Description:
The record gives the reactivity of an RNA of 177 nucleotides to DMS and 2A3. For DMS the reverse transcriptase was MarathonRT. The RNA was probed in 150 mM KOAc, 10 mM MgCl2 and 150 mM bicine (pH 8.5) at 24 C.
RNA sequence: GGGAACGACUCGAGUAGAGUCGAAAAGAUAUGGAACCACUGGCAAGGCCAGUAUUCGGAAACGAAUACGGCUGAUGACCCAGGGUUCCUAAGUCAAAACCGCUCAAAAGUUCGCUUUUGAGCGGAAUCUCGUAUAUAACUUCGGUUAUAUACGAGAAAAAGAAACAACAACAACAAC
Reactivity to DMS in 0.01 (KOAc 150mM, MgCl2 10mM, bicine 150mM(pH8.5), 24C), signal-to-noise 3, nucleotides 027 to 126: g020a010u000a040u010g000g000a020a010c000c000a120c010u000g010g000c010a080a020g020g010c000c010a130g020u000a000u000u000c000g000g010a020a010a040c000g010a020a000u010a010c000g000g040c010u000g010a060u020g000a050c300c000c000a010g010g000g000u000u000c000c000u010a010a050g010u000c000a150a060a170a220c010c020g030c000u010c000a000a000a000a000g000u000u030c300g020c000u000u010u000u000g000a000g020c010g000g000a020a050
Reactivity to 2A3 in 0.01 (KOAc 150mM, MgCl2 10mM, bicine 150mM(pH8.5), 24C), signal-to-noise 2, nucleotides 027 to 126: g000a010u020a010u050g000g020a020a000c010c040a210c280u020g020g010c090a180a140g010g000c020c080a100g000u000a000u000u010c000g000g020a000a000a010c000g010a020a000u000a000c000g000g000c010u020g010a090u030g020a000c010c000c000a020g010g000g020u000u010c000c010u000a000a000g000u000c000a000a010a200a220c010c000g000c020u000c000a030a000a010a010g010u110u170c300g120c110u000u020u000u020g000a000g030c000g010g000a000a030
Source: RMDB library TTRDES, as collected in RNAgym.